The record gives the reactivity of an RNA of 207 nucleotides to 2A3.
[RMDB]
RNA sequence: GGGAACGACUCGAGUAGAGUCGAAAAACACCAUCGAUACUCUGGAUGUGUACCCAUGAUCGAUCAGAAUUCACAGUUCUUCGCCAUCCUGACCAACAUCGGCGCGGCCAAGCAGGCCAACGCCGAUGCCCUUGGCAUCCCGUGGAAGAUCACCCAGUGGACCUCAUCUAUUCGUAGAUGAGGUCCAAAAAGAAACAACAACAACAAC
Reactivity to 2A3 in 0.01 (KOAc 150mM, MgCl2 10mM, bicine 150mM(pH8.5), 24C), signal-to-noise 1, nucleotides 027 to 156: a000c030a020c010c000a050u100c020g060a100u160a290c030u030c080u150g120g020a150u040g120u000g000u140a080c020c020c010a130u170g120a090u070c010g030a030u060c060a010g010a130a210u150u150c160a040c010a190g050u060u040c050u090u210c060g010c060c010a060u070c050c060u070g110a170c050c020a000a070c000a010u000c000g010g000c000g000c020g020g060c010c000a070a080g210c180a100g040g020c070c030a070a050c010g000c000c000g000a000u000g000c010c010c010u070u020g040g000c000a000u000c060c000c010g010u010g020g030a080a040g060a040u050c000a020c060c040c000a050g000
The reactions ran in a buffer of 150 mM KOAc, 10 mM MgCl2 and 150 mM bicine (pH 8.5), at 24 C.